Chemical mapping of a 177-nucleotide RNA with 2A3 and DMS. Values are in units of 0.01, from 0 to 300, in steps of 10. DMS adducts were read by reverse transcription with MarathonRT. Conditions: 150 mM KOAc, 10 mM MgCl2 and 150 mM bicine (pH 8.5), 24 C.
[RMDB]
RNA sequence: GGGAACGACUCGAGUAGAGUCGAAAAGACGAACACGAACACGAACACUAAUUUAUUUGCCACCAGAGAAUGGACCGGAAUAAGUUGGACAGAUCUUUUCGGUGAUUUCGUUGAUGCAUUUACAUAAGCAUUUUACCGUGUUCGCACGGUAAAAUGCAAAAGAAACAACAACAACAAC
Reactivity to 2A3 in 0.01 (KOAc 150mM, MgCl2 10mM, bicine 150mM(pH8.5), 24C), signal-to-noise 3, nucleotides 027 to 126: g030a000c040g010a050a000c010a000c030g000a050a030c070a030c170g010a110a000c010a020c070u070a090a080u010u010u050a020u020u060u160g040c000c000a030c020c020a060g040a010g070a300a180u100g020g000a070c190c070g020g030a030a000u090a040a000g020u020u000g000g040a080c020a090g040a100u000c020u010u020u020u050c030g080g060u040g030a150u000u010u050c000g010u000u000g010a030u100g010c120a150u090u130u110a120c040a130u190a110a070
Reactivity to DMS in 0.01 (KOAc 150mM, MgCl2 10mM, bicine 150mM(pH8.5), 24C), signal-to-noise 1, nucleotides 027 to 126: g020a080c010g000a140a000c110a000c070g000a090a050c150a010c050g020a000a230c030a110c000u000a030a140u050u030u000a030u020u000u010g000c000c000a240c000c000a030g020a140g000a030a300u000g000g020a030c140c030g000g010a030a000u000a110a020g000u000u000g070g000a150c230a150g000a020u000c000u000u000u000u000c050g030g000u000g190a130u000u000u000c000g000u010u010g000a010u000g000c100a050u000u000u000a180c120a000u030a030a140